[RMDB]
RNA sequence: GGGAACGACUCGAGUAGAGUCGAAAACAAGGCGGGGGUGUGGCUGGACGACGCGGGGUCCGUGCCCUUCGGGGAGCUCCUGGGCCUCAGUCAGAAACCCAUGAGGAGGCAGUGCGUGGUGCCGCUGCCCUCAUUAACUCUUCGGAGUUAAUGAGGGAAAAGAAACAACAACAACAAC
Reactivity to DMS in 0.01 (KOAc 150mM, MgCl2 10mM, bicine 150mM(pH8.5), 24C), signal-to-noise 6, nucleotides 027 to 126: c100a120a110g010g010c060g000g010g000g010g010u010g020u010g010g010c110u000g000g000a190c100g010a030c050g000c120g010g010g000g010u000c010c010g010u000g010c000c000c000u000u010c140g010g010g000g000a140g010c080u010c090c090u000g020g010g000c010c010u000c000a070g010u010c020a070g000a150a080a080c040c010c020a080u000g010a100g000g010a110g000g010c040a050g010u010g020c070g010u000g000g010u010g010c060c040g000c070u000g010
Reactivity to 2A3 in 0.01 (KOAc 150mM, MgCl2 10mM, bicine 150mM(pH8.5), 24C), signal-to-noise 3, nucleotides 027 to 126: c060a050a050g070g000c050g000g020g000g050g010u060g010u040g040g040c070u010g010g020a030c040g010a000c010g040c140g040g000g010g010u000c010c010g010u050g010c000c000c000u030u050c130g020g010g010g010a040g080c060u070c070c100u060g000g020g000c000c000u020c000a020g030u010c000a000g070a060a060a010c020c010c020a020u100g040a030g060g020a030g030g000c030a010g020u030g060c060g030u040g040g060u070g030c030c030g040c040u070g000